RNA sequence: GGGAACGACUCGAGUAGAGUCGAAAAACGAGGCCAUACGUGGCCUCGAGUAAGAUGAAUCUACGGUUAUUUGCAGUUAGUUAAUCACCGGGAUUGCAUCUUUCGAACGAUCAUUACGAUGAUCGAAGUACUAUGGUCGAUUCGUCGACCAUAGUACAAAAGAAACAACAACAACAAC
Reactivity to DMS in 0.01 (KOAc 150mM, MgCl2 10mM, bicine 150mM(pH8.5), 24C), signal-to-noise 4, nucleotides 027 to 126: a100c020g000a000g010g020c010c000a030u000a100c180g040u000g000g000c000c000u000c000g000a040g000u000a020a010g000a000u000g000a040a000u000c010u000a080c010g020g020u000u000a020u000u000u010g010c010a260g030u030u030a140g000u000u010a010a020u000c050a000c000c000g000g010g000a010u000u000g000c000a000u000c000u010u010u000c070g010a120a240c020g000a010u000c010a020u000u000a140c160g030a070u000g000a010u000c000g010a090a090
Reactivity to 2A3 in 0.01 (KOAc 150mM, MgCl2 10mM, bicine 150mM(pH8.5), 24C), signal-to-noise 9, nucleotides 027 to 126: a000c010g000a000g000g010c010c000a030u040a100c280g080u040g000g000c000c000u000c000g000a000g000u050a000a000g000a000u000g010a010a000u000c000u170a270c040g000g000u010u010a010u030u030u070g030c050a080g140u150u300a050g000u020u060a270a010u020c020a000c000c000g000g010g000a000u010u050g130c000a000u000c000u010u010u040c030g040a090a040c020g000a000u000c010a010u030u100a060c230g120a030u010g010a000u000c000g000a060a020
Annotation: Structure probing data (DMS and 2A3) for a 177-nucleotide construct. For DMS the reverse transcriptase was MarathonRT. Source: RMDB libraries RFM100 and RFMREP, as collected in RNAgym. As a SHAPE reagent, 2A3 marks flexible, mostly unpaired nucleotides at the ribose 2'-OH.